[RMDB]
RNA sequence: GGGAACGACUCGAGUAGAGUCGAAAACGAGGUGCGGUAGGCCUCGUUAACAAACCGCAAAAAAAUAGUCGCAAACGACGAAAUCUACGCACUCGCAGCUUAAUAACCUGCGCUGAGCCCUUCUCCCAAAACUGAGGUAGGUUCGCCUACCUCAGAACUUAAAUAUCUUGUUCGCAAGAUAUUUAAGAAAAGAAACAACAACAACAAC
Reactivity to 2A3 in 0.01 (KOAc 150mM, MgCl2 10mM, bicine 150mM(pH8.5), 24C), signal-to-noise 6, nucleotides 027 to 156: c000g000a000g000g030u090g040c060g030g070u060a030g050g020c000c000u000c000g020u010u020a020a020c020a010a040a020c010c030g010c050a080a060a010a010a010a020a130u140a060g010u020c020g020c120a080a130a110c050g040a000c010g040a070a020a020u040c050u050a030c040g000c030a030c020u020c020g010c010a010g000c010u060u060a050a020u040a070a060c000c010u010g030c010g010c100u060g040a030g020c020c010c010u090u060c040u050c030c010c010a030a100a070a090c010u000g000a000g000g000u000a000g020g030u020u050c140g040c030c000u010a020c000c000u000c000a000g000a000a000
Reactivity to DMS in 0.01 (KOAc 150mM, MgCl2 10mM, bicine 150mM(pH8.5), 24C), signal-to-noise 2, nucleotides 027 to 156: c010g000a060g010g040u010g000c000g010g000u000a220g010g010c010c010u000c010g000u000u020a040a160c050a090a150a130c030c000g040c050a000a000a040a070a020a110a210u010a100g010u010c010g000c060a140a090a160c010g010a040c000g000a050a110a090u010c040u000a050c010g010c060a080c050u010c030g020c030a040g000c020u010u000a120a090u000a130a120c190c010u000g000c000g000c050u000g000a070g010c000c000c070u000u000c050u000c000c020c010a060a070a050a110c000u010g000a010g010g010u000a010g010g030u010u000c220g030c010c010u000a020c010c010u000c000a000g000a020a100